The record gives the reactivity of an RNA of 177 nucleotides to DMS and 2A3. Source: RMDB library VIROID, as collected in RNAgym. For DMS, 7,680 sequencing reads were counted. The RNA was probed in 150 mM KOAc, 10 mM MgCl2 and 150 mM bicine (pH 8.5) at 24 C. In probing experiments dimethyl sulfate is read out at A N1 and C N3, which are open when not base-paired. Values are in units of 0.01, from 0 to 300, in steps of 10.
RNA sequence: GGGAACGACUCGAGUAGAGUCGAAAACCAGGCCACGUUUCAACCUGCAAGGGUUGGGGCGGCUUAGCAAUUAAGGCGUUGUUCCACCUUAGUGGCCCUUACCCCAUGCAAAGUCUGCAUGCAGGCGGAUAAGUCAAAUGUUCGCAUUUGACUUAUCAAAAGAAACAACAACAACAAC
Reactivity to DMS in 0.01 (KOAc 150mM, MgCl2 10mM, bicine 150mM(pH8.5), 24C), signal-to-noise 6, nucleotides 027 to 126: c020c030a120g010g010c030c040a100c070g010u010u010u000c010a030a050c000c000u000g000c240a100a110g000g010g020u000u000g010g000g000g010c010g000g010c100u000u010a080g010c100a140a030u010u000a010a020g000g010c070g000u000u010g010u000u000c040c030a080c030c010u000u000a010g020u000g010g010c020c030c060u000u000a100c040c010c050c160a060u010g000c030a030a090a170g010u000c120u000g000c020a160u000g010c100a050g010g010c180g020
Reactivity to 2A3 in 0.01 (KOAc 150mM, MgCl2 10mM, bicine 150mM(pH8.5), 24C), signal-to-noise 4, nucleotides 027 to 126: c010c000a000g020g070c020c020a070c070g010u020u030u050c020a030a020c010c010u020g060c070a060a110g050g000g000u010u030g010g000g010g000c030g020g000c030u070u110a010g030c060a090a210u100u050a070a030g040g000c030g080u060u080g030u140u000c020c010a020c010c010u030u030a020g030u030g150g000c000c000c000u010u090a080c000c000c000c010a020u040g010c010a060a160a210g150u070c080u040g000c000a030u040g000c000a020g050g020c060g070